[RMDB]
RNA sequence: GGGAACGACUCGAGUAGAGUCGAAAAGUUGAGCUUAGUAACGUGGGCUUGUAAUCCAAGUGGAGACAUCAAAGUGGUUGAAUAUUGGGCUGUACCAGAUGGUUGGGCUUGGUGGGCUAAUUUCUGACUUGCCCUAUCCAAGCUUAGAGUUGGAUCACAAGAUCUUAAAGUUCGCUUUAAGAUCUUGAAAAGAAACAACAACAACAAC
Reactivity to DMS in 0.01 (KOAc 150mM, MgCl2 10mM, bicine 150mM(pH8.5), 24C), signal-to-noise 2, nucleotides 027 to 156: g020u000u020g010a100g020c110u000u000a070g020u000a090a070c130g030u000g000g020g020c000u020u000g040u020a020a080u000c040c010a050a130g020u000g030g010a180g000a050c010a070u000c070a090a060a110g020u000g010g010u000u000g020a050a070u010a120u000u010g010g000g040c030u000g000u000a120c040c010a100g010a090u000g020g020u010u000g000g010g030c000u000u010g010g020u010g000g000g000c040u000a080a060u010u010u000c160u020g010a090c190u000u010g000c010c010c030u010a050u000c020c010a010a060g010c020u010u010a050g020a070g050u000u010g040g020a250u000c010a180
Reactivity to 2A3 in 0.01 (KOAc 150mM, MgCl2 10mM, bicine 150mM(pH8.5), 24C), signal-to-noise 1, nucleotides 027 to 156: g050u060u040g010a010g020c000u070u130a000g010u060a070a040c040g020u060g000g030g000c010u040u030g030u090a030a070u050c030c030a070a040g000u060g070g050a040g000a000c030a040u090c060a070a060a030g030u050g060g010u070u040g030a050a060u040a110u150u120g020g000g000c040u060g010u050a050c030c000a020g030a140u110g080g020u000u050g030g000g000c000u000u010g000g000u020g000g000g000c030u040a060a120u120u210u100c110u100g100a140c070u060u080g000c020c000c000u020a050u020c000c000a000a000g000c010u030u070a030g000a000g010u000u000g010g000a010u060c030a010